Source information
Structure probing data (2A3 and DMS) for a 177-nucleotide construct. The DMS profile rests on 909 reads.
RNA sequence: GGGAACGACUCGAGUAGAGUCGAAAAGAUAUGGAGCAUUCGGAAGGAGUGAUGACCUCUCCUCGGAAACGAGGAGAGCAAGCUCCUCCGAGAUGCUCCUAAGUCAAAAGACCAGUUCGCUGGUCAAGUUGAUGCGAAUGUUCGCAUUCGCAUCAACAAAAGAAACAACAACAACAAC
Reactivity to 2A3 in 0.01 (KOAc 150mM, MgCl2 10mM, bicine 150mM(pH8.5), 24C), signal-to-noise 1, nucleotides 027 to 126: g050a030u090a060u170g000g000a000g040c020a060u010u000c000g010g060a300a230g070g020a040g000u100g110a300u100g060a070c020c010u020c000u020c000c010u000c020g080g040a040a050a030c000g000a010g000g000a000g000a000g000c000a030a000g020c020u000c000c010u010c000c000g000a000g000a000u040g040c010u000c000c000u000a010a020g020u020c020a030a000a110a070g000a000c040c010a020g000u060u150c260g060c080u050g050g010u000c000a000a000
Reactivity to DMS in 0.01 (KOAc 150mM, MgCl2 10mM, bicine 150mM(pH8.5), 24C), signal-to-noise 2, nucleotides 027 to 126: g040a050u010a300u000g010g000a020g020c010a040u010u000c000g010g010a100a120g010g000a020g030u010g010a040u020g050a140c300c000u000c000u000c000c000u000c050g010g010a090a110a120c010g000a040g000g000a010g020a010g010c000a010a150g010c010u000c000c000u000c000c000g010a000g010a010u000g020c010u020c000c000u000a010a060g000u010c040a130a030a130a290g000a000c010c010a030g000u000u010c300g000c000u000g010g000u000c000a070a100